[RMDB]
RNA sequence: GGGAACGACUCGAGUAGAGUCGAAAAGCUCUGCGUGACAGAUCGAACAACAAAGAGAGAUCGAAAAUCUUAGAGGAGAGAACGAAUCUGUCGACUUCACUAGGACAUUGUCGAUCAGAGGUCCAAAGACCAUGCUUGGGUUCGCCUAAGUAUGGUCAAAAGAAACAACAACAACAAC
Reactivity to 2A3 in 0.01 (KOAc 150mM, MgCl2 10mM, bicine 150mM(pH8.5), 24C), signal-to-noise 9, nucleotides 027 to 126: g030c000u000c000u010g030c040g060u040g010a010c010a030g020a030u020c020g040a050a050c040a050a030c030a030a300a010g110a020g010a010g000a020u020c020g050a040a030a020a060u010c000u010u020a020g010a030g030g020a020g000a010g030a080a040c020g030a070a140u140c120u160g100u040c030g070a150c000u010u010c010a010c040u020a010g000g020a010c020a130u080u150g050u030c000g010a010u040c010a000g020a010g050g050u000c010c000a040a040a020
Reactivity to DMS in 0.01 (KOAc 150mM, MgCl2 10mM, bicine 150mM(pH8.5), 24C), signal-to-noise 9, nucleotides 027 to 126: g000c020u000c010u000g010c230g020u020g000a060c060a060g000a020u000c020g010a210a180c080a090a090c260a060a170a080g010a070g010a250g000a010u000c020g000a040a070a090a200u010c010u000u000a010g000a070g000g000a020g000a110g000a130a030c010g010a120a100u030c120u020g000u000c000g000a270c010u000u000c010a110c010u010a010g000g000a020c140a070u020u000g010u000c010g010a070u020c000a040g000a050g000g000u000c020c020a080a090a110
Notes: Conditions: 150 mM KOAc, 10 mM MgCl2 and 150 mM bicine (pH 8.5), 24 C. This 177-nucleotide RNA was probed chemically with 2A3 and DMS. 2A3 adducts were read by reverse transcription with SuperScript II with manganese. It was measured as part of the RMDB library OK1LIB. The DMS profile rests on 55,333 reads.